[RMDB]
Annotation
An RNA of 207 nucleotides, treated with 2A3 and DMS and read out base by base. The 2A3 profile rests on 7,155 reads. For DMS the reverse transcriptase was MarathonRT. Reactivities are given for positions 27 through 156.
RNA sequence: GGGAACGACUCGAGUAGAGUCGAAAAGCUUGGCGAACCCCAAAGCUGCUGCCCUCAUAAACCUGCUGCUUUCUCAGCGGAAGGUCCAGGAGGGCCGGGCACCCUUGGGAAACAGGCUUCCUGCUGCCCUGGGGCAGUUCACGGGGGGGCCGUGAAGCACACAUAAACUAUUCGUAGUUUAUGUGUGAAAAGAAACAACAACAACAAC
Reactivity to 2A3 in 0.01 (KOAc 150mM, MgCl2 10mM, bicine 150mM(pH8.5), 24C), signal-to-noise 5, nucleotides 027 to 156: g010c020u050u050g040g040c070g050a170a090c010c010c000c010a050a100a020g010c030u120g040c010u020g000c020c020c000u010c020a110u180a060a050a010c010c000u010g020c000u010g020c010u150u190u120c180u100c160a010g000c010g000g020a040a020g000g000u020c020c040a070g040g040a000g000g000g000c000c010g000g000g000c010a040c020c000c000u020u030g010g000g000a040a100a030c020a020g020g020c000u130u050c020c010u030g020c030u030g020c000c000c030u070g060g000g000g020c010a050g030u080u090c050a060c080g010g010g000g000g020g050g000c010c000g010u030g030a020a020g040
Reactivity to DMS in 0.01 (KOAc 150mM, MgCl2 10mM, bicine 150mM(pH8.5), 24C), signal-to-noise 2, nucleotides 027 to 156: g030c050u010u030g020g000c040g040a110a190c050c000c000c000a070a110a090g020c030u000g010c020u000g020c000c000c010u000c000a060u000a090a100a010c000c000u000g020c020u000g010c020u010u010u000c210u010c220a170g010c030g040g000a020a020g010g020u000c040c030a140g010g000a040g010g000g010c020c050g000g020g030c060a060c030c010c010u000u000g000g000g000a110a040a030c000a050g020g010c130u010u000c020c010u010g000c000u000g020c000c000c020u010g020g010g020g020c010a050g010u000u000c030a060c050g020g000g010g030g020g010g000c020c000g040u000g010a100a170g000